Background
This 207-nucleotide RNA was probed chemically with 2A3 and DMS. Reactivities are given for positions 27 through 156. For DMS the reverse transcriptase was MarathonRT. For DMS, 5,429 sequencing reads were counted.
[RMDB]
RNA sequence: GGGAACGACUCGAGUAGAGUCGAAAAUGCCUAAAAAACAGUGAUGCGUCACUUAAUCUUGGUAGCUGGCGUCUAAGGUUAGGUCAUAAAAAGUCAGAUCGCGUCGUUGCUUAGAUUCGGAACAGCGGCGUUAAAUGAAUCGAGUUAGUGAUUGAUGCUGAUACCAUAGGUUCGCCUAUGGUAUCAGAAAAGAAACAACAACAACAAC
Reactivity to 2A3 in 0.01 (KOAc 150mM, MgCl2 10mM, bicine 150mM(pH8.5), 24C), signal-to-noise 6, nucleotides 027 to 156: u110g040c010c000u130a110a080a010a000a020a020c080a040g020u060g020a060u110g030c110g080u070c020a000c020u040u030a010a020u040c020u030u050g040g000u010a030g010c020u010g020g000c010g020u000c020u010a000a020g020g010u020u030a010g050g030u090c050a050u200a110a160a020a010a010g050u020c010a000g010a060u040c020g000c000g010u000c010g020u010u010g000c010u050u020a060g010a200u150u140c100g030g030a030a010c000a000g000c000g010g000c000g000u010u020a010a030a040u150g110a010a050u080c040g010a010g040u020u080a030g040u080g120a180u070u060g030a040u180g030
Reactivity to DMS in 0.01 (KOAc 150mM, MgCl2 10mM, bicine 150mM(pH8.5), 24C), signal-to-noise 2, nucleotides 027 to 156: u000g030c010c020u040a000a050a050a070a040a040c030a070g020u010g020a050u000g020c170g050u000c020a050c020u000u000a030a040u000c030u010u000g010g030u000a070g010c020u020g020g020c000g030u000c030u010a020a060g000g020u010u000a030g040g020u000c110a110u030a060a060a080a080a070g000u010c050a050g000a090u000c060g000c040g010u000c010g000u010u000g000c000u000u000a040g010a110u000u000c050g020g020a000a020c020a040g020c030g010g000c010g000u000u000a060a020a090u000g000a050a030u000c010g010a120g000u000u000a110g010u000g030a120u000u000g010a190u010g000